[RMDB]
RNA sequence: GGGAACGACUCGAGUAGAGUCGAAAACGCACAAUUUACACGGACCCGCCCUGGUGUUCUACCUUGGUGCCGGUGGUGUCCGCCAGUGUUGUGCAAGAAAACAUUAUGUGGUUCGCCACAUAAUGAAUCAAAAAUAGUCCUUCGGGACUAUUUUUGAAAAAGAAACAACAACAACAAC
Reactivity to 2A3 in 0.01 (KOAc 150mM, MgCl2 10mM, bicine 150mM(pH8.5), 24C), signal-to-noise 1, nucleotides 027 to 126: c030g020c010a000c010a030a020u070u070u260a090c040a020c000g000g010a020c000c030c010g000c020c040c040u070g000g000u060g080u200u000c070u140a160c040c050u080u290g090g060u070g000c000c020g050g000u040g030g050u160g010u010c010c010g050c010c060a110g000u010g040u010u030g000u000g000c020a010a010g020a020a090a000a010c020a000u020u000a010u010g010u010g030g050u030u020c200g000c080c000a000c000a000u000a000a000u000g000a010a090
Reactivity to DMS in 0.01 (KOAc 150mM, MgCl2 10mM, bicine 150mM(pH8.5), 24C), signal-to-noise 1, nucleotides 027 to 126: c190g010c010a000c020a020a020u030u010u030a060c070a100c000g000g000a040c000c000c000g030c010c020c110u000g030g020u000g010u010u010c090u010a050c220c200u010u050g020g010u010g010c060c050g010g020u000g000g030u010g030u000c010c010g000c050c050a080g030u010g000u000u000g000u020g000c010a090a110g030a140a140a090a150c030a000u000u000a000u010g020u010g000g000u000u040c270g000c020c000a000c000a000u000a000a010u010g000a100a100

This 177-nucleotide RNA was probed chemically with 2A3 and DMS. Conditions: 150 mM KOAc, 10 mM MgCl2 and 150 mM bicine (pH 8.5), 24 C. For DMS, 896 sequencing reads were counted. It was measured as part of the RMDB library RFMREP.